[RMDB]
RNA sequence: GGGAACGACUCGAGUAGAGUCGAAAAUGGCAGGGCCCGUCACAGAUGAUCUACUGGUGCUUUCAAGCUCCCUCAUAUUUCCUAAGUCUCUGGACUUGGAGCUCUCCUUGAUACCCUGCGAGAAUUCCGAAAACGAAUUUUUCGAAAUUCGUUUUCGAAAAGAAACAACAACAACAAC
Reactivity to 2A3 in 0.01 (KOAc 150mM, MgCl2 10mM, bicine 150mM(pH8.5), 24C), signal-to-noise 3, nucleotides 027 to 126: u090g040g010c040a000g010g020g000c040c060c020g040u040c030a080c040a130g100a080u150g020a040u090c040u110a090c050u140g050g010u030g010c000u060u150u220c090a080a000g000c010u030c020c040c000u100c060a110u120a140u130u110u070c010c010u030a040a070g010u040c000u010c100u210g070g000a020c000u010u100g030g010a020g000c000u000c010u020c010c010u000u000g010a010u040a060c000c010c000u000g030c030g000a080g020a050a070u140u080c090
Reactivity to DMS in 0.01 (KOAc 150mM, MgCl2 10mM, bicine 150mM(pH8.5), 24C), signal-to-noise 3, nucleotides 027 to 126: u010g000g020c070a040g000g000g010c130c040c050g020u000c060a080c110a060g010a090u010g010a050u010c080u000a090c130u010g010g000u000g000c040u000u000u010c140a080a090g000c040u000c060c000c110u000c080a080u000a080u000u000u000c020c030u000a070a080g000u000c030u000c170u010g010g010a040c020u000u000g010g010a100g010c090u010c020u010c030c020u000u000g000a080u000a110c020c010c010u000g010c060g010a070g010a160a190u010u000c050
Chemical mapping of a 177-nucleotide RNA with 2A3 and DMS. The DMS profile rests on 4,592 reads. DMS adducts were read by reverse transcription with MarathonRT. 2A3 adducts were read by reverse transcription with SuperScript II with manganese. Values are in units of 0.01, from 0 to 300, in steps of 10. It was measured as part of the RMDB library OK2TST. The reactions ran in a buffer of 150 mM KOAc, 10 mM MgCl2 and 150 mM bicine (pH 8.5), at 24 C. For 2A3, 2,777 sequencing reads were counted.